This 177-nucleotide RNA was probed chemically with DMS and 2A3.
For 2A3 the reverse transcriptase was SuperScript II with manganese.
The reactions ran in a buffer of 150 mM KOAc, 10 mM MgCl2 and 150 mM bicine (pH 8.5), at 24 C.

RNA sequence: GGGAACGACUCGAGUAGAGUCGAAAAGAAGAAGAGGGUGUGGAGCGUGAUAUAUCAUGUAACGCAGAAAUGCAAGGUAUGAUAUGUAAAUAGAUUCCCAGACAGAUAAGUACCCACACAAAUACGCCCAUUAGGGGUCAUUCGUGACCCCUAAUGGAAAAGAAACAACAACAACAAC
Reactivity to DMS in 0.01 (KOAc 150mM, MgCl2 10mM, bicine 150mM(pH8.5), 24C), signal-to-noise 3, nucleotides 027 to 126: g020a130a180g000a110a100g010a060g030g010g000u000g000u000g000g010a160g050c080g020u000g020a080u010a020u000a000u000c000a010u010g010u000a110a170c260g000c010a010g000a080a070a140u000g010c000a110a130g000g000u000a000u000g000a010u010a000u000g010u000a040a090a110u000a100g010a150u000u000c010c010c010a130g000a120c110a110g000a100u000a070a140g000u000a140c070c010c000a030c040a000c060a060a050a070u000a070c190g020c210
Reactivity to 2A3 in 0.01 (KOAc 150mM, MgCl2 10mM, bicine 150mM(pH8.5), 24C), signal-to-noise 1, nucleotides 027 to 126: g040a040a000g080a010a000g070a060g060g100g030u000g000u020g030g030a070g000c070g020u060g010a000u000a000u000a000u060c030a000u000g050u080a040a120c110g000c010a000g010a000a030a000u040g000c010a000a050g230g010u050a000u000g000a010u010a000u000g040u020a000a060a040u120a050g100a090u000u070c000c000c000a000g070a020c050a000g160a100u140a120a040g030u040a060c000c000c000a000c010a000c010a000a010a030u090a060c070g020c000